Structure probing data (DMS and 2A3) for a 177-nucleotide construct. The DMS profile rests on 667 reads.

RNA sequence: GGGAACGACUCGAGUAGAGUCGAAAACAUAUGUUUCACCUUUAUAUACAGUUCGAAUAGCUAACAAUAAUUGUUCAUCAGGUGCAUUUUUCAAUAUGUAACCUUUCGCACCAUUACGCAACACAUGCUCUUUCACCCUUUUCGAAGGGUGAAAGAGAAAAGAAACAACAACAACAAC
Reactivity to DMS in 0.01 (KOAc 150mM, MgCl2 10mM, bicine 150mM(pH8.5), 24C), signal-to-noise 1, nucleotides 027 to 126: c100a130u000a090u000g000u000u000u000c020a120c060c010u000u000u000a030u000a100u080a180c120a030g000u010u000c080g030a130a100u000a090g000c130u000a070a100c070a020a090u030a030a080u000u000g000u000u000c060a070u010c280a030g000g040u000g030c120a030u000u000u000u000u000c220a020a030u010a030u000g050u000a030a050c030c020u000u000u000c060g000c000a060c110c030a130u000u000a010c110g010c050a030a030c130a070c160a040u000g000
Reactivity to 2A3 in 0.01 (KOAc 150mM, MgCl2 10mM, bicine 150mM(pH8.5), 24C), signal-to-noise 2, nucleotides 027 to 126: c010a010u190a060u220g100u030u100u080c090a110c020c000u030u180u000a190u020a000u040a070c030a040g030u030u050c050g040a080a040u040a120g040c010u060a100a000c040a020a040u150a150a050u060u080g030u080u040c000a060u030c060a020g010g020u010g000c020a030u070u020u040u030u180c040a040a040u070a030u150g040u030a100a090c000c000u020u110u080c050g030c010a000c000c010a010u050u080a080c130g000c030a040a000c040a020c000a140u080g070

Conditions: 150 mM KOAc, 10 mM MgCl2 and 150 mM bicine (pH 8.5), 24 C. For DMS the reverse transcriptase was MarathonRT.